[RMDB]
RNA sequence: GGGAACGACUCGAGUAGAGUCGAAAAGUUUGGUACGAAUGUAUAAUUUGUUAGCAUGCCUUUGGCUUUUACGCAAGUUUUAUCAGCAUGUAAUCAAUGGUUGCAAAGAUACGGCAUGCUUGCUCUGCAUAGGAUGGCGGUUCGCCGCCAUCCUAUGAAAAGAAACAACAACAACAAC
Reactivity to DMS in 0.01 (KOAc 150mM, MgCl2 10mM, bicine 150mM(pH8.5), 24C), signal-to-noise 2, nucleotides 027 to 126: g030u000u000u020g020g020u000a050c050g040a080a030u010g000u010a050u000a070a090u000u000u000g020u000u010a050g000c010a010u000g000c010c020u000u010u000g000g000c050u000u010u000u010a070c150g000c130a090a080g020u000u000u020u010a060u020c090a080g020c130a170u000g020u000a020a060u000c070a050a100u000g020g000u010u000g030c010a060a080a150g010a110u000a030c300g010g000c020a010u000g000c060u000u000g000c020u000c040u020g030